The record gives the reactivity of an RNA of 207 nucleotides to DMS and 2A3.
For DMS the reverse transcriptase was MarathonRT.
Values cover nucleotides 27 to 156.
The reactions ran in a buffer of 150 mM KOAc, 10 mM MgCl2 and 150 mM bicine (pH 8.5), at 24 C.
[RMDB]
RNA sequence: GGGAACGACUCGAGUAGAGUCGAAAAGGGUGAUGUCUCCUAACCUUUAUCAAUGGGGGCACUCGGUCGUGCUGUGGGUAGAAAUUUUAUUUCGUGCCUACCUUAGACGCUUGUCGUCGUGAGUAUGUGGGACUGAUGAACUUCGGUUCAUCAGUAAACACAAAAUUAGGUUCGCCUAAUUUUGUGUAAAAGAAACAACAACAACAAC
Reactivity to DMS in 0.01 (KOAc 150mM, MgCl2 10mM, bicine 150mM(pH8.5), 24C), signal-to-noise 4, nucleotides 027 to 156: g000g010g010u010g000a100u000g000u010c010u000c010c010u000a100a070c050c030u000u000u000a100u020c130a100a080u010g030g070g030g020g000c020a080c030u000c020g010g010u000c050g030u000g020c040u000g030u000g010g020g030u010a280g000a030a030a050u000u000u000u010a070u010u020u000c030g020u000g020c020c000u000a030c020c110u000u000a130g000a060c010g030c030u000u000g030u000c000g030u000c010g010u000g000a140g010u000a080u000g040u010g020g010g010a080c010u020g000a010u000g000a010a000c000u000u010c300g070g020u000u000c000a000u000c010a000g010u000a010a090
Reactivity to 2A3 in 0.01 (KOAc 150mM, MgCl2 10mM, bicine 150mM(pH8.5), 24C), signal-to-noise 8, nucleotides 027 to 156: g060g000g010u100g020a060u040g010u020c010u010c020c010u030a080a140c010c020u130u230u150a170u160c080a050a100u210g010g000g000g010g000c000a010c010u010c010g030g000u010c020g010u020g030c050u070g010u030g000g000g020u010a030g110a020a050a020u200u260u180u180a150u040u120u060c050g030u080g010c010c000u010a020c000c010u030u060a060g000a020c010g030c070u130u250g110u270c010g000u000c010g020u040g040a050g040u110a150u210g050u080g010g050g050a000c000u000g000a000u000g000a000a000c010u040u070c220g060g000u000u010c000a000u000c000a000g000u000a010a030
For 2A3 the reverse transcriptase was SuperScript II with manganese.